Source: RMDB library OK3TST, as collected in RNAgym. An RNA of 207 nucleotides, treated with 2A3 and DMS and read out base by base. As a SHAPE reagent, 2A3 marks flexible, mostly unpaired nucleotides at the ribose 2'-OH.
[RMDB]
RNA sequence: GGGAACGACUCGAGUAGAGUCGAAAAUUGUGUCAUUUGUAUUCCAACAGCAAGUGGCACUAACUUUCGGGCAGUUGGAAUACCUGGAAGUGACUCAGUGCUCCUAAUCUAAGUACUGAGUGAACUUGUCAACUAAGAUUAGGAGUUGGCAAGUGUACGUGUCGACUCUGUUCGCAGAGUCGAUACGAAAAGAAACAACAACAACAAC
Reactivity to 2A3 in 0.01 (KOAc 150mM, MgCl2 10mM, bicine 150mM(pH8.5), 24C), signal-to-noise 9, nucleotides 027 to 156: u140u080g010u000g000u000c000a010u000u000u030g070u090a150u150u190c120c060a080a040c040a100g010c000a010a000g010u000g000g000c000a000c000u020a030a020c000u000u020u010c000g000g020g000c050a150g030u090u120g080g070a090a070u070a070c000c000u010g000g000a010a020g010u020g040a010c000u000c010a000g000u000g000c000u040c040c040u100a120a140u110c060u080a070a010g000u000a010c000u010g000a000g000u030g000a010a010c000u000u000g000u010c000a000a000c010u040a080a050g160a300u160u200a090g190g010a020g020u010u000g000g000c000a010a000g010u010g010u030a030
Reactivity to DMS in 0.01 (KOAc 150mM, MgCl2 10mM, bicine 150mM(pH8.5), 24C), signal-to-noise 3, nucleotides 027 to 156: u000u000g010u010g020u000c000a020u000u000u000g020u000a110u000u000c130c210a110a160c110a240g010c020a010a020g020u000g010g000c010a020c010u010a030a010c030u000u010u000c010g010g010g080c010a070g000u000u000g020g020a230a090u000a020c010c020u000g020g030a020a060g010u010g000a110c000u000c000a010g000u000g010c000u000c030c040u010a130a160u000c180u010a050a050g010u000a010c000u000g010a040g020u000g010a070a040c010u000u000g000u010c000a020a000c010u010a080a160g020a280u000u000a150g000g010a040g020u000u000g010g000c000a020a010g020u000g020u000a070